Structure probing data (2A3) for a 207-nucleotide construct.
The RNA was probed in 150 mM KOAc, 10 mM MgCl2 and 150 mM bicine (pH 8.5) at 24 C.
It was measured as part of the RMDB library M2RFPK.
[RMDB]
RNA sequence: GGGAACGACUCGAGUAGAGUCGAAAACAUUGUUCUAAUCAUCUGAAGAUCAGCUAUUAGAAGAGAAAGAUCAGUUAAGUCCUUUGGACCUGAUCAGCUUGAUACAAGAACUACUGAUUUCAACUUCAAAACGGGUGCUACUUCGGUAGCACCCGAACUCGACUAAGUACUUCGGUACUUAGUCGAGAAAAGAAACAACAACAACAAC
Reactivity to 2A3 in 0.01 (KOAc 150mM, MgCl2 10mM, bicine 150mM(pH8.5), 24C), signal-to-noise 2, nucleotides 027 to 156: c040a030u000u070g000u080u000c030u150a040a030u090c060a100u000c030u150g080a060a000g050a210u050c020a010g000c010u070a080u120u170a150g020a120a010g010a020g040a100a090a030g010a010u010c010a000g040u140u180a150a020g000u060c030c030u040u140u300g000g000a030c010c000u000g000a000u000c000a010g010c000u080u100g010a010u050a080c090a050a070g000a070a050c030u090a050c010u160g030a030u010u070u140c080a080a080c010u190u140c180a010a080a000a000c010g000g010g000u010g000c000u010a000c000u040u100c070g110g000u010a000g000c000a000c000c000c000g000a000a000